[RMDB]
RNA sequence: GGGAACGACUCGAGUAGAGUCGAAAAGAUAUGGAUGGUAGCGUUGAAAGUACCGUAACAUCCAUCGGAAACGAUGGUGGGUACUGGAGCUGAGAGUCCUAAGUCAAAAGUAUGCUUCGGCAUACAACCGCGCAUAUUAGUUCGCUAAUAUGCGCGGAAAAGAAACAACAACAACAAC
Reactivity to DMS in 0.01 (KOAc 150mM, MgCl2 10mM, bicine 150mM(pH8.5), 24C), signal-to-noise 2, nucleotides 027 to 126: g010a040u000a300u030g000g010a000u000g000g030u030a030g000c000g030u010u020g020a120a120a000g000u000a000c000c020g010u000a000a040c230a050u040c000c000a010u010c000g000g000a110a060a140c000g010a000u000g030g010u000g000g040g030u000a000c000u000g000g010a110g050c000u010g010a170g000a300g000u000c000c000u020a070a140g000u010c080a030a090a200a170g000u010a010u010g010c000u000u010c260g050g000c000a010u000a000c010a090a120
Reactivity to 2A3 in 0.01 (KOAc 150mM, MgCl2 10mM, bicine 150mM(pH8.5), 24C), signal-to-noise 1, nucleotides 027 to 126: g040a060u130a060u160g060g020a010u040g090g080u210a010g020c060g060u180u080g010a050a000a010g000u000a010c000c000g040u010a010a040c030a300u160c000c010a010u000c010g010g060a040a020a050c000g000a000u020g000g000u000g030g000g000u000a000c000u000g000g000a020g050c010u020g050a050g030a040g250u000c000c060u020a120a040g070u010c020a020a120a000a150g000u000a000u000g000c000u040u170c300g140g000c000a000u000a000c010a000a000

Structure probing data (DMS and 2A3) for a 177-nucleotide construct. DMS adducts were read by reverse transcription with MarathonRT.